[RMDB]
RNA sequence: GGGAACGACUCGAGUAGAGUCGAAAACGACAAGGGUGUAAAGAUCGCUCUUUUACUCGGCAUCAUACCACCGUUAUCGGGUCAACAGAGUAGUUGCAAAUGACAACAAUGCUCAGGGUUAUGCUCUAAAAGUUCGUACCCUUCGGGGUACGAACAACCAUGUAUAAGUGUUCGCACUUAUACAUGGAAAAGAAACAACAACAACAAC
Reactivity to 2A3 in 0.01 (KOAc 150mM, MgCl2 10mM, bicine 150mM(pH8.5), 24C), signal-to-noise 7, nucleotides 027 to 156: c060g080a010c040a050a050g090g030g000u040g050u130a130a130a030g080a110u140c060g000c030u030c000u040u110u060u070a100c070u040c020g020g000c010a030u010c000a020u080a150c010c040a030c040c010g060u080u070a090u180c030g000g000g040u060c040a030a050c050a080g020a010g020u060a010g010u010u010g010c030a060a170a280u210g060a130c010a030a000c020a050a130u130g010c010u020c040a030g030g000g000u050u060a050u130g030c010u010c020u110a060a090a030a030g000u000u000c000g000u000a000c010c000c000u000u030c150g040g000g000g000u000a000c000g000a000a000c000a000a000
Reactivity to DMS in 0.01 (KOAc 150mM, MgCl2 10mM, bicine 150mM(pH8.5), 24C), signal-to-noise 3, nucleotides 027 to 156: c020g010a060c070a070a080g000g000g020u000g000u000a130a150a190g000a050u000c070g030c030u010c030u010u000u010u000a140c090u000c060g000g000c010a090u000c020a130u000a140c200c010a030c010c020g010u000u000a050u000c010g030g000g020u010c050a080a060c020a090g020a040g020u000a080g040u000u000g010c000a090a110a170u000g010a140c020a030a010c030a030a090u010g000c010u000c020a100g010g040g010u000u000a070u000g010c010u000c060u010a050a090a040a140g000u010u010c010g010u010a010c000c000c000u000u010c300g050g010g020g000u000a000c010g000a000a010c000a010a060

Chemical mapping of a 207-nucleotide RNA with 2A3 and DMS.
The 2A3 profile rests on 8,857 reads.
For 2A3 the reverse transcriptase was SuperScript II with manganese.
For DMS the reverse transcriptase was MarathonRT.